[RMDB]
RNA sequence: GGGAACGACUCGAGUAGAGUCGAAAAUGAUUGCCGACCGGCAGGAGCCUUACCGCACCAUUGAGGACAUGCACCGGCGGCUCCGGCUCGACCGGCGCGCCUUCACGCUUCUGGCCGAUGCCGAUGAUCAUCAGGGCAUGUUCGCAUGCCCUGAUGAAAAAGAAACAACAACAACAAC
Reactivity to 2A3 in 0.01 (KOAc 150mM, MgCl2 10mM, bicine 150mM(pH8.5), 24C), signal-to-noise 1, nucleotides 027 to 126: u080g040a010u010u240g080c050c030g000a130c010c040g040g030c030a030g000g090a050g000c000c000u020u030a060c000c090g070c010a060c030c040a110u020u220g040a110g000g020a010c000a040u100g020c060a040c050c030g040g000c040g010g000c020u040c010c020g050g000c000u090c040g170a200c020c020g000g000c010g000c010g000c000c040u110u060c100a080c070g100c000u140u130c040u030g020g070c000c020g010a010u050g000c000c030g070a100u170g010a080
Reactivity to DMS in 0.01 (KOAc 150mM, MgCl2 10mM, bicine 150mM(pH8.5), 24C), signal-to-noise 1, nucleotides 027 to 126: u020g000a080u000u000g010c000c000g000a140c050c010g000g000c030a010g010g000a160g000c000c020u000u000a060c150c180g000c060a110c160c080a150u000u000g010a060g010g050a060c100a080u000g010c130a080c090c060g000g020c070g010g010c020u010c090c110g010g000c010u000c080g010a070c000c010g000g010c300g000c080g020c060c130u010u020c260a140c030g020c010u000u030c030u000g000g010c000c010g000a170u010g000c020c010g030a030u030g000a130
This 177-nucleotide RNA was probed chemically with 2A3 and DMS.
It was measured as part of the RMDB library OK2TST.
For 2A3 the reverse transcriptase was SuperScript II with manganese.